[RMDB]
RNA sequence: GGGAACGACUCGAGUAGAGUCGAAAACAUCUAACAAGAUCAAGUAAAUUAGCGAGCAACGAAUUUUAGCUUAUUGGGUUGGGAGUCUCCGUUUUCUAAGAAAUUUACGGCAUCCUGAUUAAGAACGCCUAAUUAUUUCGUUCGCGAAAUAAUUAGGAAAAGAAACAACAACAACAAC
Reactivity to 2A3 in 0.01 (KOAc 150mM, MgCl2 10mM, bicine 150mM(pH8.5), 24C), signal-to-noise 1, nucleotides 027 to 126: c030a070u070c010u110a030a000c010a110a020g020a080u060c030a130a010g050u070a050a060a080u070u050a000g070c080g010a030g060c030a010a040c020g060a030a020u030u080u080u090a070g020c000u070u020a060u110u160g070g000g020u000u010g020g010g020a050g000u010c030u010c000c010g000u060u050u030u040c040u070a070a000g050a020a090a000u110u140u070a030c020g030g000c010a010u060c000c010u020g000a070u070u100a040a000g050a060a000c050g060
Reactivity to DMS in 0.01 (KOAc 150mM, MgCl2 10mM, bicine 150mM(pH8.5), 24C), signal-to-noise 2, nucleotides 027 to 126: c080a090u010c050u000a050a080c060a060a070g000a030u000c060a140a130g030u010a020a050a060u000u000a080g020c080g010a050g020c300a060a060c040g030a040a060u010u020u000u000a080g010c090u000u000a030u010u000g010g000g020u000u000g000g000g010a050g000u010c020u000c030c000g010u000u000u020u020c070u000a070a080g000a070a050a020u010u000u000a050c040g020g020c220a060u010c000c010u000g000a070u000u010a060a090g010a060a090c300g000
An RNA of 177 nucleotides, treated with 2A3 and DMS and read out base by base. Conditions: 150 mM KOAc, 10 mM MgCl2 and 150 mM bicine (pH 8.5), 24 C. Source: RMDB library RFMREP, as collected in RNAgym.